[RMDB]
RNA sequence: GGGAACGACUCGAGUAGAGUCGAAAAGGGAUGGACCAUUGGAGAUGUUAAAAUCAUGUCAAGCAGACCCGAUUCCACAUGAUCUGAUGCACAAAUGGUUUGGAACUUGGUUAGAAGACUUUGAUCACAGUUACGCGUCAUUCGUGACGCGUAACUGAAAAGAAACAACAACAACAAC
Reactivity to DMS in 0.01 (KOAc 150mM, MgCl2 10mM, bicine 150mM(pH8.5), 24C), signal-to-noise 1, nucleotides 027 to 126: g050g060g020a060u010g000g050a040c060c000a090u000u000g000g060a260g050a080u000g000u020u010a000a030a060a020u040c010a000u000g000u010c210a170a190g000c240a020g000a040c160c050c000g050a080u000u000c070c200a080c110a140u000g000a090u000c050u010g000a030u090g000c000a060c080a030a000a000u040g000g010u000u000u030g000g000a240a070c040u000u000g000g000u000u000a000g000a070a170g000a040c000u000u000u000g000a230u000c060a290
Reactivity to 2A3 in 0.01 (KOAc 150mM, MgCl2 10mM, bicine 150mM(pH8.5), 24C), signal-to-noise 2, nucleotides 027 to 126: g150g000g000a070u120g000g030a060c030c000a020u000u130g230g090a280g000a060u120g030u040u120a000a280a100a040u090c000a000u090g000u040c080a080a050g000c000a070g100a080c020c040c050g000a010u150u000c010c000a000c020a020u050g000a040u000c060u130g060a040u160g030c040a010c020a020a010a010u070g050g000u000u070u070g000g000a020a020c000u050u000g100g000u220u110a010g110a140a000g090a000c000u140u150u260g070a120u040c040a020
The record gives the reactivity of an RNA of 177 nucleotides to DMS and 2A3. The 2A3 profile rests on 594 reads. For DMS the reverse transcriptase was MarathonRT.